RNA sequence: GGGAACGACUCGAGUAGAGUCGAAAAACAAAGGGGCGCACAUAAACUGCCUACGGCAUGAGUAGCAGCGCCAUGUGAAAAUGUCGGAAAGCUAGGCUGGAGAGCAAAAAUUCGACCCAAACAGUUUCAUAUGAUUUUCUUUCGAGAAAAUCAUAUGAAAAGAAACAACAACAACAAC
Reactivity to 2A3 in 0.01 (KOAc 150mM, MgCl2 10mM, bicine 150mM(pH8.5), 24C), signal-to-noise 6, nucleotides 027 to 126: a000c070a020a120a010g010g000g020g010c060g030c040a040c010a070u200a080a160a050c040u060g000c010c000u020a050c010g000g000c000a010u010g010a010g000u000a000g000c020a010g020c030g070c070c060a080u020g000u000g010a020a010a000a010u010g000u010c020g020g020a160a030a000g040c050u030a010g020g010c020u010g050g030a060g010a020g060c080a030a080a030a010a050u120u100c040g050a150c000c010c050a040a130a030c050a060g040u000u010u010
Reactivity to DMS in 0.01 (KOAc 150mM, MgCl2 10mM, bicine 150mM(pH8.5), 24C), signal-to-noise 2, nucleotides 027 to 126: a130c010a060a030a120g020g000g000g000c030g000c080a040c120a050u040a040a020a210c090u010g040c000c040u000a180c000g000g000c010a000u040g000a050g020u000a060g010c020a040g000c240g010c180c210a080u000g020u000g000a090a090a090a030u000g000u000c000g010g000a030a120a100g030c120u020a020g030g020c000u030g000g000a090g010a040g040c120a030a040a060a060a070u040u010c010g010a050c000c050c030a110a090a080c200a200g000u000u000u000